RNA sequence: GGGAACGACUCGAGUAGAGUCGAAAAGCUAGCCCAGGCGAUUCUCCAUAGCCGACGGCGAAACUUUAUGGAGCUACGGCCUGCGAGAACCUGCCCACUGGUGAGCGCCGGCCCGACAAUCAAACAGUGGGAUACACACGUAGACGCACGCUGGACGCUUCACGUAAUAGUUCGCUAUUACGUGAAGAAAAGAAACAACAACAACAAC
Reactivity to 2A3 in 0.01 (KOAc 150mM, MgCl2 10mM, bicine 150mM(pH8.5), 24C), signal-to-noise 3, nucleotides 027 to 156: g040c030u030a010g000c000c000c000a000g000g010c010g000a020u110u040c000u000c010c010a030u020a030g010c000c000g040a030c040g030g000c010g030a060a010a010c020u100u220u180a020u040g020g010a020g000c010u030a020c020g000g000c000c000u010g000c010g000a020g010a060a030c010c020u050g010c010c000c020a000c010u020g010g020u110g030a040g030c000g000c020c040g030g000c000c000c000g030a020c020a060a060u210c140a080a050a060c030a040g000u000g000g010g000a010u100a030c100a010c020a000c030g040u050a030g060a110c040g010c060a010c030g030c060u040g040g020a020c070g000
Reactivity to DMS in 0.01 (KOAc 150mM, MgCl2 10mM, bicine 150mM(pH8.5), 24C), signal-to-noise 2, nucleotides 027 to 156: g020c040u000a300g000c010c000c000a270g020g030c010g010a070u010u010c030u010c030c050a100u000a300g020c020c020g030a120c130g010g010c020g000a140a070a070c070u000u000u000a080u010g020g010a120g030c040u000a060c040g000g010c000c000u000g020c040g010a090g000a130a020c020c020u000g030c050c010c020a050c030u000g030g030u010g020a190g000c040g030c010c030g000g000c020c020c020g010a140c110a070a140u000c090a060a060a070c040a030g000u010g000g020g010a130u000a080c040a060c070a080c070g020u000a070g010a060c040g010c040a060c050g020c010u000g000g000a090c090g010